[RMDB]
RNA sequence: GGGAACGACUCGAGUAGAGUCGAAAAACACAGUGUGUUGGUUUUAGCUGGGAUGGAGUUCUAGAACAAACCUGCACUUUAGAACACCUUUCUACCCACCCCCAACCACACAACUUGCUACUAUUAGUAAAUGUAUAGGCUGAGGCACGGUGGCUCAGGACCAUGAGUAGUUCGCUACUCAUGGUCCAAAAGAAACAACAACAACAAC
Reactivity to 2A3 in 0.01 (KOAc 150mM, MgCl2 10mM, bicine 150mM(pH8.5), 24C), signal-to-noise 1, nucleotides 027 to 156: a000c070a000c060a060g030u010g000u000g000u070u170g020g000u000u110u090u140a130g000c090u010g020g010g050a070u080g000g030a060g040u000u000c000u000a000g000a200a120c060a190a110a000c010c110u060g030c030a000c000u000u010u020a010g010a010a000c010a090c010c000u050u040u030c180u140a120c000c050c020a020c060c000c000c000c000a010a010c020c010a030c000a000c000a000a090c090u040u150g060c010u000a040c030u040a080u270u050a020g010u050a010a110a080u090g020u010a110u050a060g040g050c000u000g020a080g000g000c030a000c110g070g020u040g030g000c000u000c030a000
Source: RMDB library OK3TST, as collected in RNAgym. The record gives the reactivity of an RNA of 207 nucleotides to 2A3. Values are in units of 0.01, from 0 to 300, in steps of 10.